RNA sequence: GGGAACGACUCGAGUAGAGUCGAAAAUGGGUCAUUCACUCCUUAUGAGAAUCUAAUGCCUGAUGAUCUGUCACUGUCUCCCAUCACCCCCAGCAGUGACCAUCUUGUUGCAGGAAAACAAGUUCAGGGCUCCCACUGAUUCUAUGUUAUGGUGAGAACUCAUAUACGGGUUCGCCCGUAUAUGAGUAAAAGAAACAACAACAACAAC
Reactivity to 2A3 in 0.01 (KOAc 150mM, MgCl2 10mM, bicine 150mM(pH8.5), 24C), signal-to-noise 1, nucleotides 027 to 156: u030g000g000g070u080c030a060u190u120c030a060c030u080c010c010u070u190a120u190g070a010g070a070a020u010c020u070a130a040u170g040c020c020u090g000a080u020g000a030u040c060u060g010u000c000a030c010u000g030u070c040u030c100c010c020a050u300c210a090c010c050c000c000c020a010g000c000a000g040u010g010a050c040c020a020u010c030u030u020g000u020u020g070c010a070g090g060a010a090a000a000c020a040a000g030u120u020c010a000g050g060g000c040u060c040c000c000a070c090u070g000a030u120u060c030u020a080u090g040u120u060a040u060g060g070u060g020a060g040a060
Reactivity to DMS in 0.01 (KOAc 150mM, MgCl2 10mM, bicine 150mM(pH8.5), 24C), signal-to-noise 1, nucleotides 027 to 156: u010g020g000g020u040c060a060u000u000c020a130c050u010c060c020u020u020a070u030g010a190g050a130a090u000c060u010a070a050u000g000c050c000u000g010a130u010g000a090u010c050u020g020u040c020a010c010u010g030u010c000u010c010c010c000a030u010c220a220c010c000c000c030c090a300g020c010a040g010u010g020a040c010c090a090u010c000u000u000g050u000u010g030c050a220g010g000a050a070a080a070c070a050a050g000u020u000c010a150g030g000g010c060u000c040c010c000a090c040u000g010a040u010u000c030u010a120u020g040u000u000a020u010g050g040u000g000a120g010a130